[RMDB]
RNA sequence: GGGAACGACUCGAGUAGAGUCGAAAAUCCUAAGUCAUAAGACCUCGUUUCCUUGGAUUUACAAGUGGAGAAUUCGGAAACGAAUUCGAUGAAACUUGUUGUCAGGAAACGGGAUCUUAUGAUAUGGAAAAGCCCAGUUACUUCGGUAACUGGGCAAGACUAACUAAGAGUUCGCUCUUAGUUAGUCAAAAGAAACAACAACAACAAC
Reactivity to DMS in 0.01 (KOAc 150mM, MgCl2 10mM, bicine 150mM(pH8.5), 24C), signal-to-noise 2, nucleotides 027 to 156: u000c000c010u010a040a280g010u000c000a040u000a020a000g000a010c000c000u000c010g040u000u000u000c000c010u020u010g090g010a040u010u000u000a020c020a010a000g020u010g000g000a160g020a030a020u000u020c000g010g000a230a130a300c010g020a010a010u000u000c000g020a130u010g050a210a130a020c000u000u000g020u000u000g010u010c020a060g000g010a010a000a000c000g030g020g010a000u000c000u000u000a000u000g000a020u010a150u010g010g000a100a120a120a150g020c010c000c000a000g020u000u000a020c000u000u010c300g040g030u000a010a000c000u000g000g010g030c000a000a010
Reactivity to 2A3 in 0.01 (KOAc 150mM, MgCl2 10mM, bicine 150mM(pH8.5), 24C), signal-to-noise 7, nucleotides 027 to 156: u020c000c000u040a110a030g010u000c000a000u000a000a010g000a010c000c000u030c020g000u000u000u020c010c000u070u190g190g010a050u270u210u180a010c000a000a000g010u000g010g020a020g000a010a010u010u000c010g010g040a060a100a100c010g000a010a000u000u000c020g250a300u020g010a010a010a010c000u000u000g010u000u010g000u000c000a000g000g000a000a000a000c010g000g000g000a000u010c000u000u000a000u000g000a000u010a030u030g010g010a080a110a040a040g010c010c000c000a010g000u000u000a000c000u010u050c110g110g000u000a000a000c000u000g000g020g000c000a000a000